[RMDB]
RNA sequence: GGGAACGACUCGAGUAGAGUCGAAAAUUUAUCAUGGAAGCGUGGAUGGAAUCUCUGAGGAUCAGCGAGACAUCAUGUCUAGCAAAGGCGUCGUUUGUCUUAGACGCUCACACGUCGACAAAACAACAACAUCUCGUCUUUUCGAAGACGAGAUGUUAAAAGAAACAACAACAACAAC
Reactivity to 2A3 in 0.01 (KOAc 150mM, MgCl2 10mM, bicine 150mM(pH8.5), 24C), signal-to-noise 1, nucleotides 027 to 126: u080u000u000a150u040c100a080u090g010g060a000a010g080c070g020u020g010g090a050u050g040g090a180a050u020c120u010c050u150g190a110g050g030a080u090c010a020g010c000g050a000g000a000c000a000u220c020a040u170g000u000c010u030a020g010c060a060a040a030g030g010c010g020u070c030g020u070u070u070g090u000c020u020u000a040g000a000c020g000c000u030c030a010c000a000c020g000u000c000g020a000c070a010a050a010a020c030a000a000c010
Reactivity to DMS in 0.01 (KOAc 150mM, MgCl2 10mM, bicine 150mM(pH8.5), 24C), signal-to-noise 2, nucleotides 027 to 126: u000u030u000a080u040c090a100u000g030g000a140a160g020c090g020u000g020g000a090u000g020g000a130a100u000c020u000c130u000g010a100g010g040a040u000c080a140g020c040g000a080g020a050c010a110u000c210a110u020g000u000c020u000a140g000c060a070a120a090g010g010c040g000u000c040g000u000u000u010g020u010c110u000u000a140g000a010c010g010c040u000c100a100c160a050c010g010u000c050g000a170c070a010a040a110a050c090a020a120c160

The data come from the RNA Mapping Database (RMDB), library OK2TRN. Chemical mapping of a 177-nucleotide RNA with 2A3 and DMS. For 2A3 the reverse transcriptase was SuperScript II with manganese. Reactivities are given for positions 27 through 126.